[RMDB]
RNA sequence: GGGAACGACUCGAGUAGAGUCGAAAACGCAUGCGCUCGAGCCGCGCGAUCGCCUCGAGCGUGCGCGCGAGAUUCUUGCCGGGCGCGAGCGAGCCGACGAUCAGCACGUAGCCGUCGUAGGCGAGGACGUAUGGGUCGUGUUCGCACGACCCAUACGAAAAGAAACAACAACAACAAC
Reactivity to DMS in 0.01 (KOAc 150mM, MgCl2 10mM, bicine 150mM(pH8.5), 24C), signal-to-noise 2, nucleotides 027 to 126: c030g020c010a070u010g010c010g020c000u000c000g010a130g010c020c050g000c010g010c040g010a100u000c020g020c040c030u000c240g000a160g010c010g020u000g020c000g050c000g000c010g030a180g010a170u000u000c130u010u000g010c050c000g000g000g030c020g000c010g030a030g010c000g000a110g000c010c000g000a020c020g000a090u000c070a090g000c020a130c250g010u030a090g000c050c060g020u000c020g020u010a020g000g020c010g000a170g000g010a170
Reactivity to 2A3 in 0.01 (KOAc 150mM, MgCl2 10mM, bicine 150mM(pH8.5), 24C), signal-to-noise 2, nucleotides 027 to 126: c020g010c020a020u150g000c010g030c010u000c010g030a070g050c100c030g010c030g010c070g010a110u100c000g030c020c010u240c200g160a240g000c020g000u050g000c020g000c000g000c010g010a040g040a130u250u070c090u100u290g050c000c000g000g020g010c000g020c000g030a010g000c000g000a040g000c020c010g050a090c010g010a080u180c080a010g010c030a010c210g160u170a070g070c020c000g000u040c030g010u070a030g010g010c030g000a060g060g030a010
The data come from the RNA Mapping Database (RMDB), library OK2TRN. The record gives the reactivity of an RNA of 177 nucleotides to DMS and 2A3.